About this RNA:
Source: RMDB library OK2TST, as collected in RNAgym. An RNA of 177 nucleotides, treated with 2A3 and DMS and read out base by base.

RNA sequence: GGGAACGACUCGAGUAGAGUCGAAAAUCAUCGCGUUGCGGCGCGGUGCAACCUUCUAAAUAACUCACGUAACUGCCUUCAUCAGCAAUGAUGAGUGUUCGCUCAAAUUGACCGGUAUUGGCGGCGACCGCCGAUAAAAUUUCGAUUUUAUCGGCGGAAAAGAAACAACAACAACAAC
Reactivity to 2A3 in 0.01 (KOAc 150mM, MgCl2 10mM, bicine 150mM(pH8.5), 24C), signal-to-noise 5, nucleotides 027 to 126: u070c000a000u010c010g000c000g020u010u060g100c210g130g000c010g000c000g000g010u000g000c000a020a080c010c000u110u080c070u200a130a170a180u160a120a080c040u040c070a050c080g110u080a120a050c020u050g000c010c000u050u040c010a030u000c000a010g010c020a000a100u060g050a100u120g010a060g020u050g130u190u170c140g000c010u010c040a060a050a090u080u090g080a230c030c050g000g000u030a050u020u080g030g000c000g020g010c010g070a060
Reactivity to DMS in 0.01 (KOAc 150mM, MgCl2 10mM, bicine 150mM(pH8.5), 24C), signal-to-noise 4, nucleotides 027 to 126: u010c000a030u000c010g010c000g030u000u000g030c160g050g010c010g010c010g030g020u000g000c170a120a100c040c030u000u010c110u000a060a060a050u010a090a060c070u010c050a040c130g000u000a090a100c070u010g000c040c010u010u000c040a020u000c020a040g010c090a040a040u000g020a120u010g000a020g020u000g000u000u010c160g010c010u000c030a040a180a060u000u000g000a100c060c030g020g000u000a060u000u010g000g010c010g010g010c090g010a130
Conditions: 150 mM KOAc, 10 mM MgCl2 and 150 mM bicine (pH 8.5), 24 C.
For 2A3 the reverse transcriptase was SuperScript II with manganese.
Values cover nucleotides 27 to 126.